[RMDB]
RNA sequence: GGGAACGACUCGAGUAGAGUCGAAAACGUUAUUCUAGCGAUGAUAUUCGAUUCCGCUUAUUUACCGAUUCUGUCCGUAGUUUUGUUGGUAAUAGAGGCAGCAAGUUCAGAGGUUUAUCGCUUUCUCGAAUUUUGUAUAUAAUCGAUGAGCCUGUUAAAGAAUAGGACAGUUCGCUGUCCUAUUCUUAAAAGAAACAACAACAACAAC
Reactivity to DMS in 0.01 (KOAc 150mM, MgCl2 10mM, bicine 150mM(pH8.5), 24C), signal-to-noise 2, nucleotides 027 to 156: c100g000u010u000a050u010u000c100u000a140g060c100g010a090u000g020a130u010a140u000u000c000g000a080u000u010c060c010g010c010u000u000a080u000u010u000a080c040c030g010a130u010u000c040u000g020u010c020c040g030u000a100g000u010u000u000u010g000u000u000g010g000u010a050a120u000a130g030a100g040g030c060a150g000c020a040a040g010u000u000c010a090g010a190g000g020u000u000u010a090u010c100g030c080u010u000u010c040u010c070g000a030a060u000u000u010u000g010u020a040u000a120u000a080a060u010c040g010a080u000g000a080g010c010c000u010g000u010u000a050
Reactivity to 2A3 in 0.01 (KOAc 150mM, MgCl2 10mM, bicine 150mM(pH8.5), 24C), signal-to-noise 2, nucleotides 027 to 156: c030g000u050u040a060u110u110c080u070a050g040c000g050a060u150g020a020u060a180u150u110c030g020a060u110u070c040c030g030c080u120u070a080u230u160u070a130c060c050g040a110u110u000c000u050g100u140c060c000g100u150a100g000u090u030u110u140g000u000u040g000g000u010a070a040u070a120g150a010g050g000c000a010g030c060a060a000g000u030u050c030a030g010a000g090g030u130u190u180a160u040c000g000c000u100u300u030c030u000c010g000a010a040u250u300u060u000g010u010a000u010a080u050a130a060u070c060g000a050u040g080a010g030c010c000u080g090u050u030a090
Conditions: 150 mM KOAc, 10 mM MgCl2 and 150 mM bicine (pH 8.5), 24 C. An RNA of 207 nucleotides, treated with DMS and 2A3 and read out base by base. Values cover nucleotides 27 to 156. Source: RMDB library OK3TST, as collected in RNAgym. For 2A3 the reverse transcriptase was SuperScript II with manganese.